[RMDB]
RNA sequence: GGGAACGACUCGAGUAGAGUCGAAAACCAGACCCCUAACAUCGAAAGAUGAGUACAUUCAACGUAUACCUACUAAUGUAGUUAAUGAAGGAUAAGGGAUUCCUCCUAAUAAGUCCUACGAAUCAGAACCUUAAAGACACUUCGGUGUCUUUAAGGUAAAAGAAACAACAACAACAAC
Reactivity to 2A3 in 0.01 (KOAc 150mM, MgCl2 10mM, bicine 150mM(pH8.5), 24C), signal-to-noise 6, nucleotides 027 to 126: c010c000a000g080a080c000c020c020c020u030a070a000c000a010u010c010g060a070a080a020g020a020u030g000a040g070u050a040c030a110u040u220c060a090a050c100g080u080a050u030a120c020c030u020a030c010u130a190a150u280g010u060a040g040u060u110a080a090u190g090a090a020g040g010a010u030a050a050g020g000g010a020u100u090c010c020u040c000c000u070a120a090u120a210a010g030u020c000c000u020a050c070g110a040a020u110c020a020g050a070
Reactivity to DMS in 0.01 (KOAc 150mM, MgCl2 10mM, bicine 150mM(pH8.5), 24C), signal-to-noise 5, nucleotides 027 to 126: c010c000a160g020a260c050c010c020c030u010a100a160c020a020u000c000g010a140a190a140g000a010u020g020a200g010u010a070c080a110u010u020c110a040a110c070g000u020a070u000a050c120c000u000a040c020u030a100a100u060g010u000a010g000u010u000a040a060u010g010a090a130g010g000a020u010a060a170g000g010g010a180u000u030c110c080u000c030c040u000a060a100u010a060a080g000u000c010c010u000a020c110g020a060a150u000c080a070g010a140
This 177-nucleotide RNA was probed chemically with 2A3 and DMS. The reactions ran in a buffer of 150 mM KOAc, 10 mM MgCl2 and 150 mM bicine (pH 8.5), at 24 C.